Source: RMDB library RFM100, as collected in RNAgym. Structure probing data (2A3 and DMS) for a 177-nucleotide construct. For 2A3, 983 sequencing reads were counted. For 2A3 the reverse transcriptase was SuperScript II with manganese. High 2A3 reactivity points to a flexible backbone, as in loops and unpaired stretches.

[RMDB]
RNA sequence: GGGAACGACUCGAGUAGAGUCGAAAAUUUGCCUCCUUCCUCUGGCCAUUUGCAGACUAAGGAACUGGCCUCCAAAGAGACUUGAUUUUUGUGUUACUUUCCAGCCCCUUCUCCCCCCCUUUCAUCCUUUGUCACGAAUUUUCGAAUUCGUGACAAAAAAAGAAACAACAACAACAAC
Reactivity to 2A3 in 0.01 (KOAc 150mM, MgCl2 10mM, bicine 150mM(pH8.5), 24C), signal-to-noise 2, nucleotides 027 to 126: u100u050u100g030c010c000u000c020c020u040u000c010c010u010c050u060g060g000c010c040a100u000u010u180g030c030a030g020a070c040u080a060a000g020g020a030a020c030u020g020g010c000c020u000c000c010a040a070a040g050a020g010a000c020u020u020g080a060u150u060u010u080u050g050u020g060u110u020a070c010u050u020u050c000c010a020g020c000c000c040c010u040u000c010u000c000c010c000c000c000c000c000u000u050u020c070a130u080c010c050
Reactivity to DMS in 0.01 (KOAc 150mM, MgCl2 10mM, bicine 150mM(pH8.5), 24C), signal-to-noise 2, nucleotides 027 to 126: u040u000u000g000c020c000u010c030c030u000u000c000c010u020c030u000g000g110c060c040a080u010u030u010g060c000a150g000a080c160u050a100a040g000g040a100a060c070u010g000g030c000c020u000c040c140a050a070a070g000a150g000a080c070u000u000g000a030u020u000u000u020u010g020u000g000u020u000a040c030u000u020u010c050c020a150g010c000c020c030c040u000u000c040u000c000c010c000c030c000c030c020u000u000u000c030a090u010c140c070